This 207-nucleotide RNA was probed chemically with DMS.

RNA sequence: GGGAACGACUCGAGUAGAGUCGAAAACAUGUAGCCCAGACCUUCAAGGCUACGGUGCGUUGCGACGCACGGUCUGAUUCUUCACAACGACGUUCACCGCGUCUUCUUCCAUCCCCCUGGGGCAGUGUAUAACCAGCAGCCUUCGGGCUGCUGGUAACUGUACUGAACGUUUCGACGUUCAGUACAGAAAAGAAACAACAACAACAAC
Reactivity to DMS in 0.01 (KOAc 150mM, MgCl2 10mM, bicine 150mM(pH8.5), 24C), signal-to-noise 1, nucleotides 027 to 156: c070a090u010g030u000a060g000c020c000c040a110g030a180c070c010u010u000c110a120a100g020g010c000u000a020c020g050g050u000g000c000g040u000u000g030c130g020a250c060g080c030a030c030g030g000u020c030u000g010a140u000u000c120u010u010c060a120c090a090a120c010g030a080c010g000u000u000c010a110c140c070g030c060g050u000c020u010u000c040u000u010c000c000a080u030c020c000c000c020c090u000g010g020g000g040c030a080g010u010g010u050a090u000a070a060c000c000a040g010c000a010g000c010c010u000u020c300g030g060g040c000u000g000c000u000g000g010u000a010a090
DMS adducts were read by reverse transcription with MarathonRT. Values cover nucleotides 27 to 156. The RNA was probed in 150 mM KOAc, 10 mM MgCl2 and 150 mM bicine (pH 8.5) at 24 C.